[RMDB]
RNA sequence: GGGAACGACUCGAGUAGAGUCGAAAAGCAUUCCACUUCGGUGGAAUGCAAAUGCCGGCUGCAAGAAUAGUGCUUCAAAGAGUGGGAGCACUGCCGAAGAAAAAAGUUCCAUGUUCGCAUGGAACAAUCAACUCUUUUUGUUCGCAAAAAGAGUUGAAAAAGAAACAACAACAACAAC
Reactivity to 2A3 in 0.01 (KOAc 150mM, MgCl2 10mM, bicine 150mM(pH8.5), 24C), signal-to-noise 4, nucleotides 027 to 126: g010c000a000u000u010c000c000a010c010u030u030c150g070g000u000g000g010a000a000u000g000c000a010a020a010u090g030c020c000g020g020c030u080g000c050a050a000g030a160a060u110a190g020u000g000c010u030u010c050a150a160a090g150a080g100u180g060g000g000a020g000c000a010c000u000g020c000c000g060a110a070g060a080a140a000a010a000a020g010u000u000c000c010a010u010g050u030u060c210g000c070a010u010g000g000a010a000c000a000a020
Reactivity to DMS in 0.01 (KOAc 150mM, MgCl2 10mM, bicine 150mM(pH8.5), 24C), signal-to-noise 2, nucleotides 027 to 126: g020c010a010u000u010c010c000a010c000u010u010c180g010g050u000g010g010a040a000u000g000c000a000a020a050u000g010c080c010g010g010c020u020g010c150a090a070g000a130a090u000a040g020u000g020c000u000u000c010a070a130a140g020a140g030u010g010g010g000a020g000c010a010c000u000g010c030c000g000a110a160g010a000a050a070a060a080a100g000u000u000c000c010a010u000g000u000u010c210g040c010a020u000g010g000a000a000c020a050a050
Chemical mapping of a 177-nucleotide RNA with 2A3 and DMS.
The reactions ran in a buffer of 150 mM KOAc, 10 mM MgCl2 and 150 mM bicine (pH 8.5), at 24 C.
Values cover nucleotides 27 to 126.
2A3 adducts were read by reverse transcription with SuperScript II with manganese.
Source: RMDB library M2PK50, as collected in RNAgym.
The 2A3 profile rests on 5,711 reads.
2A3 is a SHAPE reagent: it acylates the 2'-hydroxyl of flexible nucleotides of all four kinds.